Background: An RNA of 177 nucleotides, treated with 2A3 and DMS and read out base by base. 2A3 adducts were read by reverse transcription with SuperScript II with manganese. For 2A3, 565 sequencing reads were counted. For DMS the reverse transcriptase was MarathonRT. Reactivities are given for positions 27 through 126.
[RMDB]
RNA sequence: GGGAACGACUCGAGUAGAGUCGAAAAAGGAGAAGGUUGGUAUUUUGUAGGCAAAAAUCUACGAAGCCAUUUUCGAAGCCCUUCUCCUAGGUCAAAGUUUUGAAGUCUAGGUUCGAUUCCUAGUAUCAUUUCUUCGGGUUUUCGAACCCGAAGAAAUAAAAGAAACAACAACAACAAC
Reactivity to 2A3 in 0.01 (KOAc 150mM, MgCl2 10mM, bicine 150mM(pH8.5), 24C), signal-to-noise 1, nucleotides 027 to 126: a010g000g030a000g000a000a010g000g020u110u120g010g050u060a300u090u020u010u060g010u000a000g000g030c130a240a000a020a000a040u000c000u000a000c000g000a000a000g000c000c000a040u150u150u030u230c080g070a070a000g050c030c000c000u000u020c010u000c000c010u000a030g000g040u070c020a050a030a230g040u050u050u120u150g060a060a010g020u120c000u000a000g010g030u000u080c020g040a070u120u030c000c000u000a000g010u000a070u070c000
Reactivity to DMS in 0.01 (KOAc 150mM, MgCl2 10mM, bicine 150mM(pH8.5), 24C), signal-to-noise 2, nucleotides 027 to 126: a000g000g000a020g000a030a000g000g000u010u050g010g000u000a120u020u000u000u000g000u000a000g000g010c080a020a200a070a070a200u010c030u000a030c130g000a020a050g000c000c000a040u010u000u020u060c120g000a170a170g020c300c000c000u000u000c000u010c000c000u000a030g000g000u010c070a100a060a080g000u020u020u020u000g030a040a170g000u000c020u000a000g000g030u000u030c130g000a300u010u050c000c000u000a020g030u030a110u000c020